[RMDB]
RNA sequence: GGGAACGACUCGAGUAGAGUCGAAAAAGUUAGGUUCGCUAUGGUGCAACUCUUUAAGGCAAUAACGAACUAGUUCUAAGCAAGUAAUGGAGAAAUGCCAGGGUCACUAUCUAGCCAUAAUAGUGCUGUAAGUGACUUAGAUUCGUCUAAGUCACAAUACUUUGGAGGGUUUCGACCCUCCAAAGUAAAAAGAAACAACAACAACAAC
Reactivity to 2A3 in 0.01 (KOAc 150mM, MgCl2 10mM, bicine 150mM(pH8.5), 24C), signal-to-noise 1, nucleotides 027 to 156: a000g100u080u060a020g020g040u060u130c000g030c030u090a030u080g060g010u100g100c080a140a070c050u010c050u140u250u170a120a010g010g010c000a040a180u010a100a080c020g030a010a000c010u030a040g000u010u080c030u040a060a000g000c010a020a020g070u090a000a080u090g040g000a060g060a060a050a010u150g030c050c000a040g010g010g000u030c000a010c010u030a030u130c030u040a010g030c000c020a010u030a200a030u090a090g150u030g010c050u020g010u140a180a140g000u000g000a000c000u000u000a000g000a000u020u020c050g020u000c240u000a000a000g000u000c000a000c000a010a020
Reactivity to DMS in 0.01 (KOAc 150mM, MgCl2 10mM, bicine 150mM(pH8.5), 24C), signal-to-noise 1, nucleotides 027 to 156: a030g000u010u010a110g010g030u000u010c020g020c010u000a060u010g010g090u000g000c040a060a190c110u000c060u000u020u020a120a080g040g000c070a090a060u010a070a040c070g000a060a060c000u000a160g010u000u000c020u010a090a090g030c040a030a080g000u010a090a140u000g010g000a090g000a090a150a050u000g010c000c020a050g010g000g070u000c030a060c000u000a100u010c030u010a070g010c050c050a080u000a010a060u000a090g000u000g020c000u000g000u000a070a120g020u010g030a050c010u020u010a020g000a030u000u000c270g000u000c000u010a000a020g000u010c020a010c000a060a140
This 207-nucleotide RNA was probed chemically with 2A3 and DMS. Conditions: 150 mM KOAc, 10 mM MgCl2 and 150 mM bicine (pH 8.5), 24 C. DMS adducts were read by reverse transcription with MarathonRT. High DMS reactivity at an A or C suggests that its Watson-Crick edge is free. The DMS profile rests on 2,278 reads. The data come from the RNA Mapping Database (RMDB), library M2RFPK.